Conditions: 150 mM KOAc, 10 mM MgCl2 and 150 mM bicine (pH 8.5), 24 C. An RNA of 177 nucleotides, treated with 2A3 and DMS and read out base by base. The 2A3 profile rests on 3,433 reads. For DMS the reverse transcriptase was MarathonRT. It was measured as part of the RMDB library OK2TST.
[RMDB]
RNA sequence: GGGAACGACUCGAGUAGAGUCGAAAACGCCAAGUACAUCAUCCGGGAGGACGGCCAGCGGCUGGACCUGCGCUUCCUGCGCAAGGACUCUGACCGCCACCUGGAGUUUGGCUACAAGGUGGAGCGCAACAUCAAGACACUUCGGUGUCUUGAUGUUAAAAGAAACAACAACAACAAC
Reactivity to 2A3 in 0.01 (KOAc 150mM, MgCl2 10mM, bicine 150mM(pH8.5), 24C), signal-to-noise 2, nucleotides 027 to 126: c030g000c000c000a030a010g060u090a060c030a100u090c010a090u010c040c000g000g030g010a040g020g090a180c010g000g020c020c010a040g010c070g170g000c090u080g020g090a070c010c000u020g000c010g020c000u260u180c060c170u100g020c010g000c020a020a020g030g000a020c010u000c010u000g000a000c000c010g000c010c000a030c010c000u000g000g000a010g000u010u040u030g030g000c010u020a030c030a050a060g040g000u030g000g040a030g080c150g000c050
Reactivity to DMS in 0.01 (KOAc 150mM, MgCl2 10mM, bicine 150mM(pH8.5), 24C), signal-to-noise 4, nucleotides 027 to 126: c090g010c010c010a050a300g000u000a050c080a070u000c110a190u000c010c010g000g020g020a180g020g010a050c000g000g020c010c010a000g000c300g000g000c180u000g010g000a060c030c010u000g010c000g020c000u010u010c280c230u010g000c010g000c010a010a030g000g000a150c020u000c000u000g000a030c000c010g000c000c000a010c010c000u000g000g000a020g000u010u000u000g010g000c070u000a070c110a070a240g000g030u000g010g000a090g000c120g000c160